The data come from the RNA Mapping Database (RMDB), library OK3TST. An RNA of 207 nucleotides, treated with DMS and 2A3 and read out base by base. DMS adducts were read by reverse transcription with MarathonRT. Conditions: 150 mM KOAc, 10 mM MgCl2 and 150 mM bicine (pH 8.5), 24 C. The DMS profile rests on 6,833 reads. 2A3 adducts were read by reverse transcription with SuperScript II with manganese. DMS (dimethyl sulfate) methylates the pairing face of unpaired adenines and cytosines.

[RMDB]
RNA sequence: GGGAACGACUCGAGUAGAGUCGAAAAGUUCUGUGGCAUGAAAUAUCAGGGAAUGUAUUUCUCAAAGUCCUUUAUCUUGUAGCAGCAUAGGUAGCUAGAAAGUUGUGUAAGAGCAAGUUUUUUGUGUCCUUAUCAAAGUCAAGCUACAAUACAAUUCCAACUAUAUGGAAUUCGUUCCAUAUAGUUGAAAAGAAACAACAACAACAAC
Reactivity to DMS in 0.01 (KOAc 150mM, MgCl2 10mM, bicine 150mM(pH8.5), 24C), signal-to-noise 3, nucleotides 027 to 156: g000u000u000c020u010g020u010g010g010c030a100u000g010a080a080a100u000a070u010c040a100g000g010g000a090a100u000g030u000a120u000u000u000c030u000c010a100a110a160g010u010c030c010u000u000u000a060u030c070u000u000g020u000a040g040c010a140g000c070a110u000a080g020g010u000a130g010c030u000a110g010a070a080a110g030u000u010g000u000g040u000a040a080g000a160g030c010a010a090g020u010u000u000u000u000u010g030u000g010u000c040c020u020u000a070u010c050a050a030a120g000u000c080a080a110g010c010u000a030c030a060a100u010a050c070a070a250u000u000c000
Reactivity to 2A3 in 0.01 (KOAc 150mM, MgCl2 10mM, bicine 150mM(pH8.5), 24C), signal-to-noise 7, nucleotides 027 to 156: g030u070u060c030u030g080u100g030g000c020a040u100g060a070a050a020u140a080u140c080a040g020g000g080a040a030u060g030u070a070u040u070u020c070u020c050a100a140a060g060u110c020c000u100u200u110a150u110c040u010u040g010u020a010g010c030a010g000c020a020u030a090g040g040u030a020g010c010u010a020g030a040a090a080g050u020u020g010u010g010u050a020a020g010a010g020c010a020a030g020u040u030u010u060u120u050g030u010g040u040c020c000u040u070a060u100c060a060a030a030g060u050c010a050a020g000c010u020a010c000a010a030u110a060c060a040a120u140u110c090